Source information:
An RNA of 207 nucleotides, treated with DMS and 2A3 and read out base by base. The reactions ran in a buffer of 150 mM KOAc, 10 mM MgCl2 and 150 mM bicine (pH 8.5), at 24 C. For DMS the reverse transcriptase was MarathonRT. The data come from the RNA Mapping Database (RMDB), library M2RFPK.
[RMDB]
RNA sequence: GGGAACGACUCGAGUAGAGUCGAAAAGAUCGGAAACAGCAGCAGGUGAGUCCGCCUUAUGAGAAGGAUCGGCUGAAACACGAGGAAAUACUGAGCCAACGCAAGACGGUAGCCGAACAGUAGCAACAAAACGCUUACGUGUUCGCACGUAAGCGAACAUCGGUUAGCUGUUCGCAGCUAACCGAUGAAAAGAAACAACAACAACAAC
Reactivity to DMS in 0.01 (KOAc 150mM, MgCl2 10mM, bicine 150mM(pH8.5), 24C), signal-to-noise 1, nucleotides 027 to 156: g010a080u000c030g030g000a080a070a030c030a120g000c020a050g030c090a080g020g050u010g000a030g010u000c010c060g060c000c020u000u000a110u000g030a150g000a080a080g030g020a070u000c080g000g020c000u030g000a090a030a040c030a190c050g030a190g010g000a130a050a200u000a040c050u000g000a140g030c020c000a020a040c050g040c030a080a090g010a130c010g010g030u000a080g010c000c020g000a030a050c030a090g010u000a030g010c100a030a080c030a020a060a020a080c000g030c000u000u000a000c010g010u010g030u000u000c300g010c000a020c000g070u000a010a050g000c010g030a020a020
Reactivity to 2A3 in 0.01 (KOAc 150mM, MgCl2 10mM, bicine 150mM(pH8.5), 24C), signal-to-noise 3, nucleotides 027 to 156: g020a080u110c060g030g040a080a090a080c070a040g020c010a010g020c010a000g000g000u030g010a020g060u010c030c010g010c000c010u150u090a140u210g130a140g050a140a030g020g060a080u060c070g030g000c060u030g020a050a070a010c110a020c050g030a050g080g060a030a030a000u160a040c040u030g030a020g020c000c020a030a100c030g080c070a000a050g040a050c000g030g020u040a000g040c010c000g010a000a010c020a010g110u100a020g010c050a000a060c010a060a090a000a040c030g000c010u030u010a000c030g010u000g020u060u090c120g060c070a000c010g020u000a010a010g000c000g000a020a000